[RMDB]
RNA sequence: GGGAACGACUCGAGUAGAGUCGAAAAAGAGGUGUUCUUGUGGAUUGGACUCACAUCUCAGAUCUUUUUAGGCAUCUGUGGCCAAUGCUUUCAGCUCGUACCCAGGUUUGGUCUUACACACAUGCACCUACAUGAGGCCAUUCGUGGCCUCAUGUAGAAAAGAAACAACAACAACAAC
Reactivity to DMS in 0.01 (KOAc 150mM, MgCl2 10mM, bicine 150mM(pH8.5), 24C), signal-to-noise 2, nucleotides 027 to 126: a040g000a040g010g010u010g010u010u010c060u000u000g020u000g040g000a150u010u000g020g010a140c060u010c100a070c140a030u000c040u000c040a100g010a060u000c010u010u000u000u010u000a060g000g030c070a040u000c030u010g040u000g020g010c040c030a070a060u000g010c060u000u000u020c150a070g010c070u020c090g030u000a080c040c030c020a050g020g010u000u000u010g010g010u000c030u010u000a080c230a060c080a040c090a050u000g000c090a070c120
Reactivity to 2A3 in 0.01 (KOAc 150mM, MgCl2 10mM, bicine 150mM(pH8.5), 24C), signal-to-noise 1, nucleotides 027 to 126: a000g080a020g060g000u040g000u160u000c100u100u120g030u060g010g060a100u070u140g080g010a040c010u070c160a050c030a060u070c040u020c040a060g020a140u030c000u090u150u080u060u220a050g030g000c040a010u010c040u070g020u050g010g000c010c010a000a040u070g060c040u030u040u120c060a030g020c050u010c050g020u040a070c000c000c020a000g000g070u080u080u090g020g010u000c020u020u080a060c080a000c020a010c010a070u040g030c010a050c040
The data come from the RNA Mapping Database (RMDB), library OK2TST. Chemical mapping of a 177-nucleotide RNA with DMS and 2A3. For 2A3 the reverse transcriptase was SuperScript II with manganese. The reactions ran in a buffer of 150 mM KOAc, 10 mM MgCl2 and 150 mM bicine (pH 8.5), at 24 C. For DMS the reverse transcriptase was MarathonRT.